[RMDB]
RNA sequence: GGGAACGACUCGAGUAGAGUCGAAAAGAUAUGGAGAUUUUUGUUGCGGGAGUAGUUCGGAAACGAAUACUACGAGGAUCGCAAUCUCCUAAGUCAAAAGACGUAAGAGGUUCGCCUCUUACGUCAACAAUUCUGCCAAGUUCGCUUGGCAGAAUUGAAAAGAAACAACAACAACAAC
Reactivity to DMS in 0.01 (KOAc 150mM, MgCl2 10mM, bicine 150mM(pH8.5), 24C), signal-to-noise 2, nucleotides 027 to 126: g000a050u000a300u000g010g000a060g020a150u000u000u000u020u030g010u010u010g020c030g020g010g000a060g010u000a010g000u000u000c000g020g000a120a090a220c000g010a060a060u020a020c010u000a020c000g030a130g020g040a040u000c020g010c030a060a020u000c020u000c000c000u000a030a140g020u030c070a040a050a140a120g000a000c000g010u000a020a000g000a010g010g020u000u010c200g020c010c000u000c000u010u000a000c000g010u000c000a030a090
Reactivity to 2A3 in 0.01 (KOAc 150mM, MgCl2 10mM, bicine 150mM(pH8.5), 24C), signal-to-noise 2, nucleotides 027 to 126: g010a040u090a080u150g070g010a010g010a070u080u220u170u300u300g300u240u140g050c010g030g000g000a000g000u020a000g010u000u030c000g010g050a070a050a020c000g010a050a070u130a300c030u000a020c030g050a300g050g010a010u020c000g020c000a010a010u000c000u000c000c000u020a260a010g060u050c040a000a030a050a300g000a000c010g000u000a000a000g000a000g000g020u070u090c260g150c050c000u020c000u000u000a010c000g000u000c000a000a020